[RMDB]
RNA sequence: GGGAACGACUCGAGUAGAGUCGAAAAGAUAUGGAAACCACACAGCUUUUGACGGCUACUCGGAAACGAGAGCCGAUAAGCUGUAGGUUUCCUAAGUCAAAGAUGCUAGCCUUCGGGCUAGCAUCAACGUACCAUAGUCCUUCGGGACUAUGGUACGAAAAGAAACAACAACAACAAC
Reactivity to DMS in 0.01 (KOAc 150mM, MgCl2 10mM, bicine 150mM(pH8.5), 24C), signal-to-noise 1, nucleotides 027 to 126: g030a040u020a300u010g010g010a000a010a000c000c000a140c120a090c030a020g020c000u000u000u010u010g000a190c100g010g000c010u000a070c010u000c000g000g000a090a070a110c010g010a070g010a110g010c010c000g000a000u000a030a020g020c040u010g010u000a010g000g010u010u000u000c010c010u000a020a110g010u000c010a050a050a120g010a020u000g030c020u000a000g000c000c000u000u010c160g020g030g000c000u040a010g000c000a000u000c000a010a070
Reactivity to 2A3 in 0.01 (KOAc 150mM, MgCl2 10mM, bicine 150mM(pH8.5), 24C), signal-to-noise 1, nucleotides 027 to 126: g000a000u020a020u100g000g000a000a000a000c000c030a100c010a000c020a200g000c020u160u230u230u220g280a100c040g000g000c000u200a300c010u090c010g020g000a100a020a020c000g000a020g010a010g000c000c000g000a000u040a020a010g010c010u000g010u000a020g040g010u020u000u000c010c000u000a030a000g010u030c030a000a110a190g000a010u010g000c010u000a030g000c040c000u050u140c300g140g000g000c010u020a000g000c000a010u000c000a000a010